RNA sequence: GGGAACGACUCGAGUAGAGUCGAAAACCUCCAAACUUCGGUUUGGAGGAAAUGGAGCCAAAAUAAGAACGGAAAGGGAAGACGGAACCCAAGUCUAUAAAAAAAGUACCAUGUUCGCAUGGUACAAGUACAAAAUAAACUUCGGUUUAUUUUGUACAAAAGAAACAACAACAACAAC
Reactivity to 2A3 in 0.01 (KOAc 150mM, MgCl2 10mM, bicine 150mM(pH8.5), 24C), signal-to-noise 4, nucleotides 027 to 126: c000c000u000c010c000a020a000a010c000u020u040c120g090g000u000u020u000g010g000a020g000g010a020a010a020u100g030g040a030g050c010c010a020a040a020a110u240a100a050g040a090a020c050g020g050a050a030a020g030g000g000a020a010g030a010c020g010g040a040a040c000c000c010a010a010g040u000c070u070a180u250a060a080a020a000a010a000a010g000u000a000c000c000a000u010g030u030u080c230g000c070a000u010g000g000u000a000c000a000a000
Reactivity to DMS in 0.01 (KOAc 150mM, MgCl2 10mM, bicine 150mM(pH8.5), 24C), signal-to-noise 4, nucleotides 027 to 126: c010c000u010c000c010a000a000a000c000u000u010c230g030g000u000u000u000g000g000a010g020g000a000a020a060u000g020g010a100g030c010c040a060a070a090a070u000a070a060g000a090a130c110g000g010a020a040a090g010g000g010a090a030g010a040c060g010g010a100a080c070c020c020a100a120g000u010c060u000a130u030a010a000a060a070a050a100a130g010u000a010c000c000a000u000g000u010u010c190g020c000a000u010g010g000u000a000c000a020a090